[RMDB]
This 207-nucleotide RNA was probed chemically with 2A3 and DMS.
Reactivities are rounded to 0.1 and cut off at 0 and 3.
RNA sequence: GGGAACGACUCGAGUAGAGUCGAAAAUUUGGCGUAGUUGUAGAUAAAAAAGUCAUCGCAUAUGCGCCAUGUAGUACUUGAUGCGUCAACACGCAACGUAGAUGUGUGUUUUGCGAGGUAAUAAUCAUCAAAUCGCAUCACGCGUGAGUGCGCAAUGCAACGUCGUUGUAUUCGUACAACGACGUUGAAAAGAAACAACAACAACAAC
Reactivity to 2A3 in 0.01 (KOAc 150mM, MgCl2 10mM, bicine 150mM(pH8.5), 24C), signal-to-noise 4, nucleotides 027 to 156: u060u040u030g000g010c030g000u020a060g090u050u060g040u120a190g050a050u170a050a100a030a010a010a040g150u140c070a010u010c010g020c020a000u110a060u130g000c000g000c000c000a010u000g010u010a060g000u030a070c020u060u090g050a050u030g050c020g030u080c050a040a040c000a030c020g030c060a150a050c090g100u080a080g020a120u010g020u000g000u000g060u040u010u070u050g050c050g030a020g020g010u040a080a130u110a140a060u260c040a020u060c020a070a010a010u040c010g000c000a000u020c010a000c010g000c010g000u010g010a080g040u100g030c000g000c040a030a070u070g030
Reactivity to DMS in 0.01 (KOAc 150mM, MgCl2 10mM, bicine 150mM(pH8.5), 24C), signal-to-noise 1, nucleotides 027 to 156: u000u000u000g000g020c000g050u000a140g000u000u010g030u000a090g020a040u040a000a040a100a110a120a250g000u000c100a060u000c000g000c000a060u000a170u000g030c000g000c000c000a000u030g050u000a080g090u000a070c050u000u000g020a160u000g030c070g010u020c090a070a070c000a020c030g010c010a130a030c080g020u000a080g000a060u010g010u020g000u000g000u000u000u020u000g040c080g010a080g020g030u000a070a050u000a090a220u000c020a120u010c040a000a070a060u020c020g020c010a010u000c050a030c040g000c030g060u010g030a120g040u020g000c040g020c050a060a080u000g030

Background
For 2A3 the reverse transcriptase was SuperScript II with manganese. For DMS the reverse transcriptase was MarathonRT. Conditions: 150 mM KOAc, 10 mM MgCl2 and 150 mM bicine (pH 8.5), 24 C. It was measured as part of the RMDB library OK3TST.